The record gives the reactivity of an RNA of 177 nucleotides to 2A3 and DMS. The data come from the RNA Mapping Database (RMDB), library OK1LIB. In probing experiments dimethyl sulfate is read out at A N1 and C N3, which are open when not base-paired. DMS adducts were read by reverse transcription with MarathonRT. The DMS profile rests on 47,292 reads. The 2A3 profile rests on 31,405 reads. The RNA was probed in 150 mM KOAc, 10 mM MgCl2 and 150 mM bicine (pH 8.5) at 24 C.
RNA sequence: GGGAACGACUCGAGUAGAGUCGAAAAGAUGAGACACAGGUUGCAGAGAGAGUGCAAGGGGAGUUGUCGCUUCACUCUCUCAAACCAAGUGAAGCUGGACAAGACCCUUCAUAACUUGGAGCUCAGAGAUAGGUGUGUUGUUCGCAGCAUAUCUAUCAAAAGAAACAACAACAACAAC
Reactivity to 2A3 in 0.01 (KOAc 150mM, MgCl2 10mM, bicine 150mM(pH8.5), 24C), signal-to-noise 9, nucleotides 027 to 126: g100a060u100g020a010g030a020c020a000c020a080g060g030u080u090g050c150a010g030a000g000a010g000a010g080u030g040c130a020a010g020g040g010g010a200g080u040u040g060u070c020g010c050u000u000c000a000c000u020c000u000c000u020c020a010a010a010c020c010a020a010g000u010g020a010a010g010c080u120g040g020a020c020a070a040g070a100c010c000c000u030u020c060a110u070a220a070c020u030u060g070g020a060g030c010u020c050a020g040a000
Reactivity to DMS in 0.01 (KOAc 150mM, MgCl2 10mM, bicine 150mM(pH8.5), 24C), signal-to-noise 9, nucleotides 027 to 126: g020a130u010g010a030g000a090c020a090c060a070g000g010u000u010g020c150a120g000a050g000a050g000a070g010u000g000c200a030a010g000g010g000g000a100g020u010u010g010u010c010g000c000u000u000c000a010c000u000c060u000c050u010c080a000a040a070c140c120a080a060g020u000g000a040a050g000c050u010g000g010a080c090a050a060g010a160c040c000c000u000u010c060a050u020a110a070c040u000u000g000g000a120g000c020u000c030a060g010a200